[RMDB]
RNA sequence: GGGAACGACUCGAGUAGAGUCGAAAAGACAGCUUCGGCUGUCAUGUGGGCGUACUACAAAGCCUUUAGACAUGAUCUAAGAAGUCCCAAAUAGGAUGGUUAGAUCAACAGCUAAAGGAACUACUUUGUAUCGCGGGGGGUAGGUUUCGACCUACAAUUGAAUAUAGAGGUUCGCCUCUAUAUUCAAAAAAGAAACAACAACAACAAC
Reactivity to 2A3 in 0.01 (KOAc 150mM, MgCl2 10mM, bicine 150mM(pH8.5), 24C), signal-to-noise 2, nucleotides 027 to 156: g000a010c000a000g000c060u170u170c300g270g000c020u040g000u000c010a000u230g080u120g040g120g010c000g020u050a090c030u000a000c040a010a000a000g010c000c000u000u000u000a020g010a020c000a030u040g010a010u000c000u020a050a000g030a040a060g150u010c010c010c030a210a300a180u300a120g010g000a010u080g010g160u030u000a010g000a010u000c010a010a060c030a080g020c010u000a010a010a010g060g010a050a000c000u080a030c010u070u010u020g030u070a110u300c040g000c040g050g060g000g000g000g000u020a010g000g010u010u070u110c140g100a040c000c000u010a020c030a020a060
Reactivity to DMS in 0.01 (KOAc 150mM, MgCl2 10mM, bicine 150mM(pH8.5), 24C), signal-to-noise 2, nucleotides 027 to 156: g010a020c000a000g020c010u010u010c300g100g050c000u000g000u010c000a020u020g000u020g000g040g030c030g010u000a060c060u010a010c000a030a040a030g020c020c000u000u000u000a010g000a050c040a300u000g000a020u000c000u010a020a060g010a300a300g020u000c000c000c020a050a110a280u000a080g000g010a040u000g010g030u000u000a010g000a060u000c000a010a090c080a140g000c000u000a010a020a030g000g020a080a140c070u010a300c000u030u000u010g010u000a040u000c060g010c070g020g010g010g020g060g020u000a030g000g000u000u000u020c210g010a090c000c000u000a030c020a030a200

An RNA of 207 nucleotides, treated with 2A3 and DMS and read out base by base.
Values are in units of 0.01, from 0 to 300, in steps of 10.
The DMS profile rests on 4,252 reads.